[RMDB]
RNA sequence: GGGAACGACUCGAGUAGAGUCGAAAAGUUGAGCACAUCUGUGAAACUCAGGGGAGGUGUGUGACAAGGAGGAAAACCAAGCAAGGCUCUGAAGUGCGACAGCUGUGUCUCGAGUCUCUGCUCUGCCUUGCACUGGCCUUAGGCCUUGGUGAGGUAAGAUAUUAUACUGCUUCGGCAGUAUAAUAUCAAAAGAAACAACAACAACAAC
Reactivity to 2A3 in 0.01 (KOAc 150mM, MgCl2 10mM, bicine 150mM(pH8.5), 24C), signal-to-noise 4, nucleotides 027 to 156: g060u040u050g020a010g040c010a020c010a070u040c050u070g050u030g080a140a070a030c040u070c040a020g020g030g020g030a050g040g010u070g010u050g010u030g040a050c070a080a060g040g020a040g020g060a060a080a020a020c040c020a000a010g040c010a030a040g080g000c000u050c040u130g070a110a010g030u040g090c070g050a020c010a040g030c050u070g030u040g070u160c020u010c040g010a020g030u000c010u000c020u050g040c020u020c010u050g020c000c000u010u010g000c020a060c110u020g000g000c010c000u070u090a110g030g010c020c000u020u080g050g000u010g010a010g000g010u040a060a030
Reactivity to DMS in 0.01 (KOAc 150mM, MgCl2 10mM, bicine 150mM(pH8.5), 24C), signal-to-noise 2, nucleotides 027 to 156: g030u000u000g020a300g050c040a050c040a090u000c020u020g040u000g010a180a080a090c040u000c050a060g020g040g030g000a070g010g020u000g020u000g000u000g010a080c090a020a130g040g020a100g040g010a070a080a100a100c050c020a040a110g020c030a050a060g020g000c010u000c050u000g010a060a040g000u010g000c060g020a090c050a070g010c050u000g000u010g000u000c030u000c020g010a170g020u000c030u010c010u000g010c020u000c050u010g010c010c000u000u010g010c000a020c050u000g000g030c000c000u020u000a130g040g050c020c000u000u000g000g090u010g000a040g030g030u000a080a140
Overview
An RNA of 207 nucleotides, treated with 2A3 and DMS and read out base by base. For DMS the reverse transcriptase was MarathonRT. 2A3 adducts were read by reverse transcription with SuperScript II with manganese. Conditions: 150 mM KOAc, 10 mM MgCl2 and 150 mM bicine (pH 8.5), 24 C. The 2A3 profile rests on 3,318 reads. The DMS profile rests on 4,939 reads.